An RNA of 177 nucleotides, treated with DMS and 2A3 and read out base by base. The 2A3 profile rests on 1,734 reads. For DMS the reverse transcriptase was MarathonRT. The reactions ran in a buffer of 150 mM KOAc, 10 mM MgCl2 and 150 mM bicine (pH 8.5), at 24 C.
RNA sequence: GGGAACGACUCGAGUAGAGUCGAAAAAAGUGACGGUGGUGGUCGAGAAGACGCCGACCACCCUGCCCCAGGCGACACCGAACGGUGCAGCGCCCUGGCAUGUUCGGGCGGGCGCCUUCGCCAUCGAGAUUUCCGAAAAGUUCGCUUUUCGGAAAUCAAAAGAAACAACAACAACAAC
Reactivity to DMS in 0.01 (KOAc 150mM, MgCl2 10mM, bicine 150mM(pH8.5), 24C), signal-to-noise 2, nucleotides 027 to 126: a100a050g000u010g000a140c020g010g010u080g010g020u000g000g000u000c040g000a130g000a220a100g000a180c240g020c110c000g030a010c020c000a000c000c000c000u010g030c010c000c030c070a090g020g030c030g000a050c130a020c110c070g020a110a030c220g050g030u000g000c100a120g010c130g020c000c000c020u030g020g000c070a050u010g060u010u000c080g020g000g000c110g000g000g010c020g000c010c030u030u000c000g000c110c030a080u000c160g000a210
Reactivity to 2A3 in 0.01 (KOAc 150mM, MgCl2 10mM, bicine 150mM(pH8.5), 24C), signal-to-noise 3, nucleotides 027 to 126: a000a000g180u110g070a050c040g000g110u240g040g000u010g000g030u070c040g030a030g040a200a050g140a020c180g020c060c000g000a000c000c000a010c010c000c010u040g000c000c000c000c020a000g010g000c000g000a000c010a030c090c060g040a180a100c110g000g000u050g000c030a040g080c020g000c020c030c000u040g060g010c060a080u180g030u180u220c070g020g020g000c000g000g040g010c000g000c000c000u010u020c020g010c020c000a020u060c000g030a040